[RMDB]
RNA sequence: GGGAACGACUCGAGUAGAGUCGAAAAUUUCGGUUAUGCCGAUCGUAUUCAGGAAAUUCAUAUCAAAGUCAUUCACAUCUUGAUUCAGUUGAUCGAAAAAGAGAUGGUAAAAGCCUGAUGUGCUGGAAUCCUCCAUGAGGUUCGCCUCAUGGAGGAUAAAAGAAACAACAACAACAAC
Reactivity to DMS in 0.01 (KOAc 150mM, MgCl2 10mM, bicine 150mM(pH8.5), 24C), signal-to-noise 2, nucleotides 027 to 126: u000u000u000c000g010g000u010u030a090u020g020c030c010g020a040u000c190g010u020a090u010u020c040a060g010g000a040a070a190u020u040c070a040u020a040u010c050a050a090a130g000u000c070a150u000u010c190a100c020a020u000c010u010u000g000a300u010u000c040a060g020u010u000g000a110u010c120g010a020a020a020a090a180g000a030g010a030u000g010g000u000a080a090a150a150g000c040c010u010g010a020u000g030u000g000c050u020g000g000a230
Reactivity to 2A3 in 0.01 (KOAc 150mM, MgCl2 10mM, bicine 150mM(pH8.5), 24C), signal-to-noise 1, nucleotides 027 to 126: u040u050u020c010g000g050u110u110a130u300g020c000c020g000a020u040c060g000u040a100u140u050c020a020g100g060a070a070a170u130u080c000a020u030a110u180c030a130a090a000g000u010c040a050u100u000c120a080c000a130u000c010u020u080g030a030u030u000c000a030g110u260u240g260a230u190c100g080a010a070a000a070a000g040a000g000a000u020g000g000u020a020a210a000a000g000c010c010u020g000a010u010g000u020g050c020u030g000g030a110
The record gives the reactivity of an RNA of 177 nucleotides to DMS and 2A3. The data come from the RNA Mapping Database (RMDB), library OK2TRN. For 2A3 the reverse transcriptase was SuperScript II with manganese. The reactions ran in a buffer of 150 mM KOAc, 10 mM MgCl2 and 150 mM bicine (pH 8.5), at 24 C.